[RMDB]
RNA sequence: GGGAACGACUCGAGUAGAGUCGAAAACUGGGCGGCAUCGAACUAGGGGCAACGGCACUCCUCAAGGAAGAUGGCUUUGAAGAGGCAAAGACUAACCAAGAAAUACAAGCGGCGCUACACCCUUCUGACUGACGAUCGAGUUCGCUCGAUCGUCAGUAAAAGAAACAACAACAACAAC
Reactivity to 2A3 in 0.01 (KOAc 150mM, MgCl2 10mM, bicine 150mM(pH8.5), 24C), signal-to-noise 2, nucleotides 027 to 126: c030u000g000g040g000c030g030g000c030a000u010c070g120a090a030c010u020a120g000g040g000g060c040a040a000c060g040g000c090a030c030u070c010c030u010c020a060a130g100g000a000a140g000a070u220g060g000c000u070u000u080g050a130a060g080a000g000g000c080a110a000a000g090a000c010u000a020a020c000c000a000a040g050a150a070a000u300a130c000a030a020g020c010g090g020c000g010c020u030a080c010a070c000c040c000u080u100c000u080g110